Background: Chemical mapping of a 177-nucleotide RNA with DMS. The DMS profile rests on 837 reads. The RNA was probed in 150 mM KOAc, 10 mM MgCl2 and 150 mM bicine (pH 8.5) at 24 C. It was measured as part of the RMDB library OK2TRN.
RNA sequence: GGGAACGACUCGAGUAGAGUCGAAAAUAAGCAUCUCCAUGUAGAGGGUUUUACCUGACUUGUUCCAGAGCAGCAGGAAGACGAGGAGUAGAGUACUUUGAGUGACAGAACGGUUCAGAGGAGCCCAAUGAUGGACAAGCUUCGGCUUGUCCAUCAUAAAAGAAACAACAACAACAAC
Reactivity to DMS in 0.01 (KOAc 150mM, MgCl2 10mM, bicine 150mM(pH8.5), 24C), signal-to-noise 1, nucleotides 027 to 126: u000a040a120g000c040a100u030c030u010c000c050a160u010g030u000a100g010a100g000g010g000u000u000u000u030a150c080c060u010g010a070c060u000u000g020u050u000c050c080a110g020a180g020c040a010g000c120a050g030g000a060a040g000a040c060g010a160g020g000a110g020u010a040g010a020g040u000a000c040u000u000u010g030a090g040u020g020a070c140a060g000a040a060c060g000g020u000u000c060a110g000a090g000g000a080g020c000c030c020a080